[RMDB]
RNA sequence: GGGAACGACUCGAGUAGAGUCGAAAACUGGGAAUAGACUGGGAGAUCUUCUGCUCUAUCUCAACAUCAGCUACUAGGCACAGAGCGCCGAAGUAUGUAGCUGGUGGUGAGGAAGAACACAGGAUCUACAGAGUUCCAAGUUCGCUUGGAACUCUGUAAAAGAAACAACAACAACAAC
Reactivity to DMS in 0.01 (KOAc 150mM, MgCl2 10mM, bicine 150mM(pH8.5), 24C), signal-to-noise 2, nucleotides 027 to 126: c000u020g030g000g000a140a020u010a010g000a060c080u010g010g010g000a040g010a000u000c000u000u020c220u010g000c070u000c000u000a100u040c000u000c000a000a000c000a000u000c000a000g010c000u000a000c000u000a100g040g000c000a080c090a270g020a260g030c160g000c000c010g010a150a150g020u000a050u030g000u000a010g000c000u030g000g020u010g010g000u020g010a000g000g010a050a050g010a000a000c070a010c200a030g020g000a030u000c000u000
Reactivity to 2A3 in 0.01 (KOAc 150mM, MgCl2 10mM, bicine 150mM(pH8.5), 24C), signal-to-noise 4, nucleotides 027 to 126: c030u060g010g030g060a070a080u090a070g090a100c070u050g010g060g050a030g010a000u000c000u050u000c010u040g030c010u000c000u010a150u070c000u020c000a010a000c000a010u000c000a000g000c000u000a000c000u040a060g020g000c040a070c050a180g160a120g140c100g000c030c000g030a040a020g100u130a080u300g000u000a000g000c000u000g000g010u000g000g000u000g000a010g020g010a050a010g010a010a000c030a000c010a030g010g000a000u010c000u020